[RMDB]
RNA sequence: GGGAACGACUCGAGUAGAGUCGAAAAGGCAAUAACGAACUAAUUCUAAGCAAGUAAUGGAGAAAUGCCAGGGUCAGUAUCUAGCCAUAAUAGUGCUUGACAGUAUGAUACUAACUGAACAAUAAGUAAAAGCGCUGGUACUUCGGUACCAGCGCAACGUGUUACAUGUGUUCGCACAUGUAACACGAAAAGAAACAACAACAACAAC
Reactivity to DMS in 0.01 (KOAc 150mM, MgCl2 10mM, bicine 150mM(pH8.5), 24C), signal-to-noise 1, nucleotides 027 to 156: g000g010c020a090a160u000a050a030c050g000a030a030c040u010a100a110u010u000c080u000a120a110g030c020a060a150g030u000a080a100u000g020g000a160g000a090a080a050u000g010c040c000a080g000g050g060u000c000a010g000u000a020u000c010u000a230g020c020c020a030u000a070a180u000a120g000u020g000c050u000u010g020a080c020a040g030u000a050u000g000a160u000a010c080u010a040a050c020u000g000a120a140c010a000a110u000a050a120g010u000a060a030a030a100g010c000g000c000u000g000g010u010a030c010u000u000c230g060g050u000a000c000c000a030g040c000g030c000a000a000
Reactivity to 2A3 in 0.01 (KOAc 150mM, MgCl2 10mM, bicine 150mM(pH8.5), 24C), signal-to-noise 4, nucleotides 027 to 156: g030g000c030a040a100u100a130a020c080g050a010a020c040u060a020a100u180u030c020u090a060a030g030c050a080a010g050u110a110a070u090g040g010a050g020a070a090a020u080g000c010c030a030g050g010g040u030c020a000g010u030a080u040c040u040a010g020c020c020a050u060a110a100u070a170g130u090g070c010u020u020g060a040c010a010g060u100a050u120g040a020u030a060c030u030a080a060c020u040g030a030a010c030a050a110u110a130a030g040u060a050a080a060a080g000c000g010c000u000g020g000u000a000c010u010u050c140g060g000u000a000c000c000a000g000c000g000c000a000a000